[RMDB]
RNA sequence: GGGAACGACUCGAGUAGAGUCGAAAAUUGAUAAUUUGUUGUGUAACUUCAUUUAAAUGAAUUGAAACAAAUUUAAUACAAGUGGAUGUAGGAUAACCGUCCGUCCUUUACAUUGGUAUAAAAUUGAACGACACAGACCUCUUCGGAGGUCUGUGAACAUACUAGACGUGUUCGCACGUCUAGUAUGAAAAGAAACAACAACAACAAC
Reactivity to DMS in 0.01 (KOAc 150mM, MgCl2 10mM, bicine 150mM(pH8.5), 24C), signal-to-noise 2, nucleotides 027 to 156: u000u020g010a160u010a040a090u000u020u000g000u010u000g010u000g010u000a070a150c100u000u000c020a040u000u000u000a040a110a100u000g000a050a100u040u010g020a220a080a120c040a060a030a030u000u000u000a070a100u000a060c020a060a040g030u000g010g000a080u000g020u000a030g010g000a030u000a050a160c080c160g020u020c040c020g000u000c000c010u000u000u000a080c020a040u000u030g000g000u000a050u010a040a020a070a120u020u010g010a050a060c050g010a270c000a010c010a010g010a020c000c000u000c000u000u010c270g010g000a030g040g010u020c010u000g020u000g000a030a150
Reactivity to 2A3 in 0.01 (KOAc 150mM, MgCl2 10mM, bicine 150mM(pH8.5), 24C), signal-to-noise 2, nucleotides 027 to 156: u150u040g010a020u030a280a070u080u000u060g000u000u030g050u020g080u060a120a040c040u050u010c020a080u130u120u270a230a210a070u080g050a050a000u090u080g060a080a000a000c050a020a110a010u030u090u130a080a040u070a070c040a110a000g010u030g040g000a010u050g050u190a040g010g000a020u050a120a100c070c070g030u000c000c000g040u040c030c040u010u000u020a040c020a120u070u050g070g020u070a050u050a090a050a010a010u070u090g010a040a010c050g060a010c010a000c000a010g000a000c010c000u040c010u060u080c160g050g000a000g020g000u000c010u000g010u000g010a000a010